[RMDB]
RNA sequence: GGGAACGACUCGAGUAGAGUCGAAAAUAUGGUUUGGAGAGUAUCCGCAUAAUCGUGAUUAUUUCAGAAUAGGCUACCCUCUGACUGUGGAAGAAACCACGGUACAAGAACGAGAAAGAGUCAUGUGGGAUGAAAUGGCUACUCCUAUAGGAUGGACAGGUGGGUCGUGAUUCGUCACGACCCACCUAAAAGAAACAACAACAACAAC
Reactivity to 2A3 in 0.01 (KOAc 150mM, MgCl2 10mM, bicine 150mM(pH8.5), 24C), signal-to-noise 1, nucleotides 027 to 156: u060a030u000g060g060u000u050u110g010g000a000g000a000g060u200a040u020c000c080g000c000a030u170a050a080u060c030g030u040g100a040u010u210a080u000u200u120c020a040g060a140a060u070a030g020g000c000u000a000c040c000c000u090c000u030g000a020c000u000g040u070g000g020a080a090g030a090a170a000c030c000a000c010g000g000u010a040c020a010a080g020a030a020c140g000a030g000a110a100a000g060a000g030u040c040a060u010g020u040g020g010g020a020u070g000a090a090a000u010g000g000c000u000a000c100u120c020c000u040a020u090a140g020g020a100u050g000g060a000c020

Source: RMDB library OK3TST, as collected in RNAgym. Chemical mapping of a 207-nucleotide RNA with 2A3. The 2A3 profile rests on 507 reads.